[RMDB]
Source information:
An RNA of 170 nucleotides, treated with 2A3 and DMS and read out base by base. In probing experiments dimethyl sulfate is read out at A N1 and C N3, which are open when not base-paired. The DMS profile rests on 81,378 reads. As a SHAPE reagent, 2A3 marks flexible, mostly unpaired nucleotides at the ribose 2'-OH. For 2A3 the reverse transcriptase was SuperScript II with manganese. The reactions ran in a buffer of 150 mM KOAc, 10 mM MgCl2 and 150 mM bicine (pH 8.5), at 24 C.

RNA sequence: GGGAACGACUCGAGUAGAGUCGAAAACCCGAUGGAGUCCCCCGCCAUCCCCUGACGGAGAAAACUGGUCCCGAUAGGGGCACCCACAAUAGGAUGGCAGGAGGGGACUGCGGGUCCGUCGUUCCAUGGGGGACAUAGUUCGCUAUGUCCAAAAGAAACAACAACAACAAC
Reactivity to 2A3 in 0.01 (KOAc 150mM, MgCl2 10mM, bicine 150mM(pH8.5), 24C), signal-to-noise 9, nucleotides 027 to 129: c010c000c000g000a080u150g080g160a030g010u000c000c000c000c000c000g000c000c000a000u000c010c010c000c030u050g030a070c110g080g020a120g100a140a190a070a070c150u180g070g030u040c000c000c000g070a140u250a300g000g000g000g000c010a040c000c000c000a060c020a070a100u080a110g000g000a000u000g010g000c030a050g080g090a200g010g000g000g000a000c000u000g020c000g000g010g010u030c050c040g000u000c010g010u000u000c010c020a060u090g190g020g010
Reactivity to DMS in 0.01 (KOAc 150mM, MgCl2 10mM, bicine 150mM(pH8.5), 24C), signal-to-noise 9, nucleotides 027 to 129: c000c000c000g030a060u010g030g010a030g030u000c030c000c010c010c010g000c010c000a010u010c010c020c110c190u010g010a140c220g040g010a150g000a090a050a090a110c200u030g020g030u020c000c010c000g000a190u060a110g010g020g010g020c000a030c100c000c010a100c130a150a090u050a070g000g030a000u010g000g000c000a020g070g010a070g020g000g010g010a010c020u030g010c030g010g010g010u030c020c050g010u000c030g000u000u000c000c000a090u050g040g010g060